The data come from the RNA Mapping Database (RMDB), library OK1LIB. Chemical mapping of a 177-nucleotide RNA with DMS and 2A3.
RNA sequence: GGGAACGACUCGAGUAGAGUCGAAAAGAGCUGGAAACUGCGUCGAUACGCUAACAAUAGAUUCAAAGCGAUCUAUAAAUAAAGACGGCUAAUUGUUAAUGCCAAUUUAGCAGGAAAAUAGCUCAAAGGGUAAUGUAAUGUUCGCAUUACAUUACCCAAAAGAAACAACAACAACAAC
Reactivity to DMS in 0.01 (KOAc 150mM, MgCl2 10mM, bicine 150mM(pH8.5), 24C), signal-to-noise 3, nucleotides 027 to 126: g020a020g000c000u000g020g010a300a130a150c000u000g010c030g010u040c230g020a040u020a050c230g030c030u010a030a060c180a030a020u000a060g000a070u060u040c130a050a130a080g000c060g000a070u000c010u020a100u010a070a060a110u030a060a040a100g000a040c120g020g000c000u000a060a090u010u060g010u000u000a020a040u020g030c150c060a050a110u000u000u020a120g010c000a010g000g000a020a080a040a200u090a010g010c020u000c010a040a070a080
Reactivity to 2A3 in 0.01 (KOAc 150mM, MgCl2 10mM, bicine 150mM(pH8.5), 24C), signal-to-noise 5, nucleotides 027 to 126: g000a000g000c010u000g030g060a070a070a020c000u000g010c010g090u100c040g040a040u050a200c060g000c020u050a010a020c010a070a020u100a070g190a160u120u210c140a170a030a050g020c020g020a030u000c000u020a040u050a120a150a010u180a060a110a010g060a010c030g040g010c020u000a050a090u060u070g060u090u090a120a070u150g000c000c010a010a010u050u040u030a040g000c000a010g000g000a110a100a020a010u050a010g000c000u000c020a030a070a020
For DMS the reverse transcriptase was MarathonRT.
2A3 is a SHAPE reagent: it acylates the 2'-hydroxyl of flexible nucleotides of all four kinds.
The reactions ran in a buffer of 150 mM KOAc, 10 mM MgCl2 and 150 mM bicine (pH 8.5), at 24 C.
The 2A3 profile rests on 6,330 reads.
2A3 adducts were read by reverse transcription with SuperScript II with manganese.